[RMDB]
RNA sequence: GGGAACGACUCGAGUAGAGUCGAAAAGAUACUUUACAGAUCUCUUUUGUCAGGCUUCCUAGGAUGUAUCAAGUUAUAGGUGGUCCACAGAGCAGGCCCUGUCCCAUCCAUCCGUGUUCCAUUAGUUGGUUUAGGGAACUCAUUUCUUCUGCCCUAAGAUAUCACUAUGUUUCGACAUAGUGAUAUCAAAAGAAACAACAACAACAAC
Reactivity to DMS in 0.01 (KOAc 150mM, MgCl2 10mM, bicine 150mM(pH8.5), 24C), signal-to-noise 3, nucleotides 027 to 156: g010a130u000a030c050u010u000u010a170c090a120g010a080u010c020u000c030u000u000u000u000g000u000c090a100g030g020c030u000u010c020c010u000a080g010g010a070u000g020u010a070u000c060a090a110g020u000u010a120u000a050g000g030u000g020g020u000c030c030a080c040a070g010a080g030c010a080g010g010c050c040c020u000g000u010c050c010c020a090u010c050c020a070u000c020c040g010u000g020u000u010c030c010a120u000u010a100g000u000u000g020g020u000u000u000a070g010g010g010a030a030c030u000c040a080u000u000u000c030u000u000c030u000g020c010c010c010u000a030a140
Reactivity to 2A3 in 0.01 (KOAc 150mM, MgCl2 10mM, bicine 150mM(pH8.5), 24C), signal-to-noise 6, nucleotides 027 to 156: g020a020u120a080c060u110u180u120a110c110a080g100a190u030c030u000c020u050u080u080u120g100u090c060a060g040g020c030u080u060c020c010u050a050g030g030a060u080g030u100a090u160c100a090a060g060u140u110a130u100a140g000g060u020g010g020u050c030c020a030c030a050g060a020g020c040a030g000g050c000c000c030u030g050u040c010c010c000a010u010c020c010a030u010c030c030g050u040g050u100u040c020c020a050u090u070a080g070u080u030g020g020u040u050u060a040g000g010g020a020a020c030u030c120a100u060u150u040c030u090u000c030u070g050c010c010c010u060a060a060